[RMDB]
RNA sequence: GGGAACGACUCGAGUAGAGUCGAAAAGUAGUCUUCUCGAUUACUCUUGUGGCAUUAACUAGCGCCCCUUAAUAAUAGUGAUGCUUUCUCGGGAGAGUAUGAGGAGAUUCAUCGCUGCUGGUCAGGGCAGGUUCUAUCCAUUCGUGGAUAGAACCUGAAAAGAAACAACAACAACAAC
Reactivity to 2A3 in 0.01 (KOAc 150mM, MgCl2 10mM, bicine 150mM(pH8.5), 24C), signal-to-noise 3, nucleotides 027 to 126: g130u130a020g010u000c010u040u020c010u010c020g030a100u060u090a080c000u040c000u030u060g080u090g040g000c000a030u060u050a270a050c010u030a040g040c050g190c050c000c000c050u080u210a230a060u210a170a010u010a140g010u010g000a010u000g010c000u120u190u010c100u060c000g050g080g000a030g000a010g000u040a060u090g020a010g010g010a000g000a000u010u030c000a010u050c030g010c080u070g040c030u080g010g060u080c020a010g020g010g000
Reactivity to DMS in 0.01 (KOAc 150mM, MgCl2 10mM, bicine 150mM(pH8.5), 24C), signal-to-noise 3, nucleotides 027 to 126: g020u010a040g010u000c000u000u000c010u000c020g020a140u010u010a030c000u000c010u000u000g020u010g010g000c020a020u000u010a070a050c020u000a030g000c290g000c050c010c010c070u010u010a060a090u000a090a100u000a010g020u000g000a010u000g010c020u010u010u010c080u010c160g020g020g020a040g000a070g020u000a020u000g020a030g030g000a020g000a030u000u000c060a090u000c130g010c050u000g000c040u010g030g000u000c040a030g010g000g010